[RMDB]
An RNA of 207 nucleotides, treated with 2A3 and read out base by base.
RNA sequence: GGGAACGACUCGAGUAGAGUCGAAAAGAGGAAGCUGAGUCUUUCACCAAUAAACAGUUGUGGUUUGUCUAAAUCCUGCAAGUGUCUGUCUGCGGGGAGGGAAGGUGAAUUCAGCUCAGGAAUGGUGGUUGGCAACGUUUGCGGGAUUUUCCCUUCAGCUCAGUAGUAGGUUCGCCUACUACUGAGCAAAAGAAACAACAACAACAAC
Reactivity to 2A3 in 0.01 (KOAc 150mM, MgCl2 10mM, bicine 150mM(pH8.5), 24C), signal-to-noise 2, nucleotides 027 to 156: g090a010g010g040a090a000g010c050u070g020a020g070u100c070u040u070u050c050a080c020c020a030a090u210a180a110a030c120a070g000u010u010g010u020g030g050u030u050u150g030u000c060u090a010a000a010u010c000c000u000g000c000a010a020g000u000g020u050c130u050g020u030c040u070g070c080g030g030g040g030a100g010g010g020a060a100g040g000u070g030a030a010u130u080c050a030g000c010u030c040a020g020g090a080a070u090g030g040u040g040g050u050u120g020g000c000a010a000c030g000u010u000u020g000c010g020g000g010a000u010u000u010u060c030c010c000u110u100c040a000
The 2A3 profile rests on 1,280 reads. The reactions ran in a buffer of 150 mM KOAc, 10 mM MgCl2 and 150 mM bicine (pH 8.5), at 24 C.